[RMDB]
RNA sequence: GGGAACGACUCGAGUAGAGUCGAAAAGCUCUGGAAUUGAGGCCCCUCUAACCAUAAUCCAAAACUACUUCGCAGAGUAAUCUGCCGAAUCGUAGGAUGCCCAUUACUAUCUAUUUUUGGAGCAUCUAAAACUGUCAGUGCUUCGGCACUGACAGAAGAUAAAAUAGGCGUUCGCGCCUAUUUUAUCAAAAGAAACAACAACAACAAC
Reactivity to DMS in 0.01 (KOAc 150mM, MgCl2 10mM, bicine 150mM(pH8.5), 24C), signal-to-noise 1, nucleotides 027 to 156: g000c010u000c030u010g000g000a070a050u000u000g000a130g040g020c050c020c060c040u000c040u030a120a140c080c080a090u010a130a130u000c050c060a040a060a130a200c000u010a040c070u000u000c040g000c020a050g000a070g010u000a110a140u010c010u000g020c040c060g030a050a040u010c130g000u010a150g010g000a050u000g000c000c000c000a100u010u010a090c130u010a120u010c100u000a100u000u000u000u000u000g010g010a140g000c020a040u000c010u010a010a080a070a200c010u000g010u000c000a020g030u010g000c000u000u000c300g070g010c000a000c010u010g010a000c000a000g020a020a070
Reactivity to 2A3 in 0.01 (KOAc 150mM, MgCl2 10mM, bicine 150mM(pH8.5), 24C), signal-to-noise 3, nucleotides 027 to 156: g010c020u000c020u050g050g070a180a050u120u040g020a050g030g070c030c010c030c030u030c090u070a090a130c060c000a120u110a100a070u090c030c040a030a050a040a080c010u040a020c010u020u010c020g000c010a000g010a030g020u120a140a070u000c000u010g020c070c040g030a000a010u070c040g010u030a010g050g000a000u020g000c010c000c000a020u030u050a060c030u090a140u210c050u110a220u130u060u000u010u010g030g000a110g010c000a010u000c010u050a020a010a040a100c000u000g000u000c000a010g000u000g010c000u000u080c120g080g000c010a000c010u000g000a000c000a000g000a000a000